RNA sequence: GGGAACGACUCGAGUAGAGUCGAAAAGAAACAUGGUUCGCCAUGUUUCAAAGAAGCUCAUUAUGACGCAAACAACGGCGUCGCCGUGAGCAAACGGCGAAAAAAGACUUAUCUUCGGAUAAGUCAACUCCGAUCUAAUGUUCGCAUUAGAUCGGAGAAAAGAAACAACAACAACAAC
Reactivity to DMS in 0.01 (KOAc 150mM, MgCl2 10mM, bicine 150mM(pH8.5), 24C), signal-to-noise 2, nucleotides 027 to 126: g000a050a000a010c020a020u000g000g010u000u000c240g040c000c000a000u000g000u000u000u000c000a050a070a170g000a110a150g000c020u000c020a030u000u030a110u040g000a040c010g040c020a060a080a180c250a090a160c230g000g010c000g030u000c000g020c100c100g010u000g000a010g010c050a040a070a100c060g020g000c080g000a000a070a060a060a170a060g010a000c000u010u020a000u000c000u000u010c220g060g010a020u010a000a010g000u000c000a020a090
Reactivity to 2A3 in 0.01 (KOAc 150mM, MgCl2 10mM, bicine 150mM(pH8.5), 24C), signal-to-noise 2, nucleotides 027 to 126: g010a000a000a000c000a000u010g010g050u030u060c110g050c030c020a000u010g010u000u000u000c000a010a010a000g100a050a030g040c010u000c040a030u030u170a080u200g030a000c010g000c000a060a190a220c070a160a100c150g040g000c010g000u010c020g010c020c000g030u030g020a040g000c030a030a050a000c040g030g030c110g070a080a070a000a010a000a020g010a000c010u000u000a000u010c000u000u060c190g000g010a000u010a000a000g000u000c000a000a000
This 177-nucleotide RNA was probed chemically with DMS and 2A3. For DMS the reverse transcriptase was MarathonRT. For DMS, 1,136 sequencing reads were counted. The 2A3 profile rests on 1,961 reads.